Chemical mapping of a 207-nucleotide RNA with 2A3 and DMS. Values cover nucleotides 27 to 156. The reactions ran in a buffer of 150 mM KOAc, 10 mM MgCl2 and 150 mM bicine (pH 8.5), at 24 C.
RNA sequence: GGGAACGACUCGAGUAGAGUCGAAAAGGUGAUUGUGAUACACCCUACCGCUAGUCGUCGAUUCUCAGUAUUAGACAGCUCCAAUCAUAGUAUGUGACACGAUUAUUUAGCUGCCUAAUCCUUAACAUAACGGGUGAUAUGUUACAGUCACAUACUACGAUCGAUCAUAGUUCGCUAUGAUCGAUCGAAAAGAAACAACAACAACAAC
Reactivity to 2A3 in 0.01 (KOAc 150mM, MgCl2 10mM, bicine 150mM(pH8.5), 24C), signal-to-noise 1, nucleotides 027 to 156: g050g000u000g020a070u030u020g010u000g000a000u000a040c000a010c000c000c000u010a040c000c030g010c050u040a020g040u000c030g010u000c020g090a140u090u000c030u010c020a020g010u000a030u020u000a000g030a020c010a000g000c000u000c010c050a100a050u020c010a000u010a020g000u010a000u010g130u030g040a000c020a000c130g030a010u010u010a030u030u160u150a010g000c000u000g000c000c020u000a010a020u000c000c030u080u100a040a000c000a070u060a130a000c010g000g000g000u030g000a030u020a050u040g000u000u000a020c000a030g000u000c010a020c000a000u020a000c000u000a020
Reactivity to DMS in 0.01 (KOAc 150mM, MgCl2 10mM, bicine 150mM(pH8.5), 24C), signal-to-noise 1, nucleotides 027 to 156: g010g000u000g000a100u000u000g070u010g010a130u000a200c080a070c030c010c010u010a140c000c000g040c060u000a010g070u000c020g000u000c050g010a260u000u000c000u000c130a080g010u000a070u000u000a010g000a030c010a040g000c000u010c090c110a070a170u000c050a100u000a130g010u000a040u000g010u000g000a050c000a110c060g010a090u000u000a100u000u000u000a160g070c010u000g020c010c000u000a080a020u000c050c030u010u000a010a030c070a050u000a060a060c010g000g010g030u010g000a150u000a030u000g010u000u000a030c130a130g030u000c000a030c000a020u000a040c030u000a140
Overview
It was measured as part of the RMDB library OK3TST.